[RMDB]
RNA sequence: GGGAACGACUCGAGUAGAGUCGAAAAAUGUACUUGUCCUCUUCGAUAUCGAGGAACUUGAACAGCGCGAUCGCAUCUUUCUCGUUGGCGAAUUUGCGGUUUGUCCGCGACUCCACCAGCUUUUGACCCGGUACCUUCUCGCCGUUCAUUGCGCGGCACCGAUAUGUGUGUUCGCACACAUAUCGGUAAAAGAAACAACAACAACAAC
Reactivity to 2A3 in 0.01 (KOAc 150mM, MgCl2 10mM, bicine 150mM(pH8.5), 24C), signal-to-noise 3, nucleotides 027 to 156: a000u100g010u030a030c030u030u050g000u030c000c000u000c000u100u110c150g180a140u120a140u260c080g000a000g070g000a100a100c000u040u120g040a080a010c020a070g010c010g020c040g110a050u090c030g000c020a030u030c050u040u120u020c050u010c070g080u050u090g050g000c040g060a080a060u060u030u070g020c010g000g090u040u140u170g100u120c050c010g010c030g020a020c030u030c030c000a010c010c020a020g040c040u030u040u060u100g070a100c000c010c000g000g040u040a060c010c050u040u030c050u030c030g010c010c000g020u040u110c070a120u120u220g060c050g000c000g060g000c030
The record gives the reactivity of an RNA of 207 nucleotides to 2A3. The reactions ran in a buffer of 150 mM KOAc, 10 mM MgCl2 and 150 mM bicine (pH 8.5), at 24 C. The 2A3 profile rests on 1,857 reads. The data come from the RNA Mapping Database (RMDB), library OK3TST.